[RMDB]
RNA sequence: GGGAACGACUCGAGUAGAGUCGAAAAGUAAGGGUGAAAGGGUGGGGUAAGAGCCCACCGCGCCGCUGGUGACAGUGGUGGCAAGGUAAACCCCACCGGGAGCAAGACCGAAUAGGGAUGACACGGGGAUUAUGUGAUUCUUCGGAAUCACAUAAUCAAAAGAAACAACAACAACAAC
Reactivity to 2A3 in 0.01 (KOAc 150mM, MgCl2 10mM, bicine 150mM(pH8.5), 24C), signal-to-noise 2, nucleotides 027 to 126: g070u090a020a090g000g000g010u070g090a160a050a050g060g010g000u030g010g000g040g000u030a060a050g030a030g120c020c000c000a010c030c000g000c000g020c010c010g000c000u030g000g000u080g030a050c010a010g010u010g000g000u030g050g050c020a020a040g010g010u020a060a050a030c000c000c000c000a000c010c000g020g010g010a060g070c100a130a070g050a100c000c000g010a050a040u090a120g040g010g030a010u070g030a040c040a020c140g000g020g030
Reactivity to DMS in 0.01 (KOAc 150mM, MgCl2 10mM, bicine 150mM(pH8.5), 24C), signal-to-noise 3, nucleotides 027 to 126: g020u010a120a140g010g000g000u000g010a100a080a100g000g010g040u000g000g000g000g040u010a030a080g000a260g000c020c020c050a050c140c120g020c010g020c000c000g030c010u000g010g010u050g000a240c030a010g020u020g000g040u000g010g010c020a120a090g000g000u000a040a140a040c010c020c010c020a010c040c010g000g000g020a120g010c130a080a090g000a130c080c030g000a090a060u000a090g020g000g000a140u000g020a090c150a080c070g000g000g000

An RNA of 177 nucleotides, treated with 2A3 and DMS and read out base by base. The RNA was probed in 150 mM KOAc, 10 mM MgCl2 and 150 mM bicine (pH 8.5) at 24 C. For DMS, 1,920 sequencing reads were counted. 2A3 adducts were read by reverse transcription with SuperScript II with manganese. It was measured as part of the RMDB library RFMREP.